[RMDB]
Notes
Chemical mapping of a 177-nucleotide RNA with DMS and 2A3. Source: RMDB library OK1LIB, as collected in RNAgym. 2A3 is a SHAPE reagent: it acylates the 2'-hydroxyl of flexible nucleotides of all four kinds. The RNA was probed in 150 mM KOAc, 10 mM MgCl2 and 150 mM bicine (pH 8.5) at 24 C. The 2A3 profile rests on 676 reads. Values cover nucleotides 27 to 126. DMS adducts were read by reverse transcription with MarathonRT. The DMS profile rests on 2,650 reads.
RNA sequence: GGGAACGACUCGAGUAGAGUCGAAAAUGCUGGUUAGGGAUUGUAGAGAUGCAGUCCCCAGUGUCGGGCUUCUCCGCAAAUUAGAUUGUAUAUGGUUACGUGCGACAGAUACUGGUGAGGCGAAGAAGGGUUAAUUUUACUUCGGUAAAAUUAACCCAAAAGAAACAACAACAACAAC
Reactivity to DMS in 0.01 (KOAc 150mM, MgCl2 10mM, bicine 150mM(pH8.5), 24C), signal-to-noise 2, nucleotides 027 to 126: u090g000c010u000g010g090u040u040a180g010g000g000a000u000u000g000u000a000g000a240g000a120u000g000c000a000g000u000c000c000c000c060a000g000u000g000u000c060g000g000g020c070u000u000c050u000c010c030g080c060a060a050a070u010u130a080g010a110u000u000g000u010a130u020a050u000g040g010u000u030a080c120g020u000g000c010g000a060c070a070g000a140u010a020c040u000g010g000u000g000a070g000g030c030g000a030a090g000a030a180
Reactivity to 2A3 in 0.01 (KOAc 150mM, MgCl2 10mM, bicine 150mM(pH8.5), 24C), signal-to-noise 2, nucleotides 027 to 126: u110g000c000u010g050g080u250u120a120g040g000g090a010u000u000g010u070a010g020a030g010a120u080g010c000a000g050u000c040c060c000c020a020g010u000g020u050c090g000g030g000c010u020u010c070u000c060c000g000c000a080a060a010u260u090a010g040a140u120u060g010u040a070u030a030u180g140g000u050u010a040c040g000u120g030c000g020a030c000a000g070a050u060a070c010u010g000g000u000g010a040g010g000c020g030a050a000g060a050a040